[RMDB]
RNA sequence: GGGAACGACUCGAGUAGAGUCGAAAAGAUAUGGACCCAUCAGAGACAUGGUACUCUCGGAAACGAGAGAAUACCAACAGCUCUAUGGGUCCUAAGUCAAAACCAUACGCACUUCGGUGCGUAUGGACAUGAUCUACAACUUCGGUUGUAGAUCAUGAAAAGAAACAACAACAACAAC
Reactivity to 2A3 in 0.01 (KOAc 150mM, MgCl2 10mM, bicine 150mM(pH8.5), 24C), signal-to-noise 6, nucleotides 027 to 126: g010a000u030a020u060g000g000a000c000c020c010a010u080c110a010g000a010g070a100c230a300u150g000g000u000a010c000u000c000u010c000g000g000a020a010a010c010g000a000g000a000g010a060a080u060a010c020c010a020a110c170a110g030c010u000c000u010a000u000g000g000g000u000c000c000u000a000a000g010u000c000a000a010a040a130c000c000a000u000a000c000g020c010a010c000u090u130c300g200g000u010g000c000g000u000a000u000g010g000a020
Reactivity to DMS in 0.01 (KOAc 150mM, MgCl2 10mM, bicine 150mM(pH8.5), 24C), signal-to-noise 7, nucleotides 027 to 126: g000a020u000a120u010g000g010a020c000c000c000a000u000c300a010g010a010g000a110c120a160u010g020g020u000a040c010u000c000u000c000g020g000a030a020a060c000g010a010g000a010g010a080a100u010a010c000c000a080a190c200a160g010c000u000c000u000a020u000g010g010g000u000c000c000u000a000a060g000u010c010a130a080a100a200c010c000a000u000a000c000g010c000a000c000u000u010c230g020g020u000g000c000g010u000a000u000g010g010a130
Chemical mapping of a 177-nucleotide RNA with 2A3 and DMS. For 2A3, 26,679 sequencing reads were counted. The data come from the RNA Mapping Database (RMDB), library TTRDES. Conditions: 150 mM KOAc, 10 mM MgCl2 and 150 mM bicine (pH 8.5), 24 C. 2A3 adducts were read by reverse transcription with SuperScript II with manganese. For DMS the reverse transcriptase was MarathonRT. Reactivities are given for positions 27 through 126.